[RMDB]
Description
Chemical mapping of a 177-nucleotide RNA with 2A3. Reactivities are given for positions 27 through 126. Reactivities are rounded to 0.1 and cut off at 0 and 3. High 2A3 reactivity points to a flexible backbone, as in loops and unpaired stretches. Source: RMDB library OK1LIB, as collected in RNAgym.
RNA sequence: GGGAACGACUCGAGUAGAGUCGAAAACAAUAGAAUACUUGGUCCACUCUUCGUUAGCUGGGUUGGCCAACAAUUCUUCGAUUGGCUUACCAACAGAAACUACACGAACUGGAUCUGGGUAAGUCUCAGCCGAUGCCACUUUCGAGUGGCAUCGGCUAAAAGAAACAACAACAACAAC
Reactivity to 2A3 in 0.01 (KOAc 150mM, MgCl2 10mM, bicine 150mM(pH8.5), 24C), signal-to-noise 2, nucleotides 027 to 126: c050a070a180u190a050g110a070a000u030a030c060u010u000g000g000u000c010c010a010c000u120c030u190u100c090g110u110u160a070g110c060u080g000g090g030u000u160g000g060c040c010a000a000c000a000a030u080u040c100u140u160c010g290a290u000u130g000g000c000u000u000a000c000c000a000a210c000a000g030a000a080a060c000u030a030c140a030c020g270a300a000c100u000g030g000a030u000c000u000g000g000g040u040a040a040g000u000c050u000c080

For 2A3 the reverse transcriptase was SuperScript II with manganese.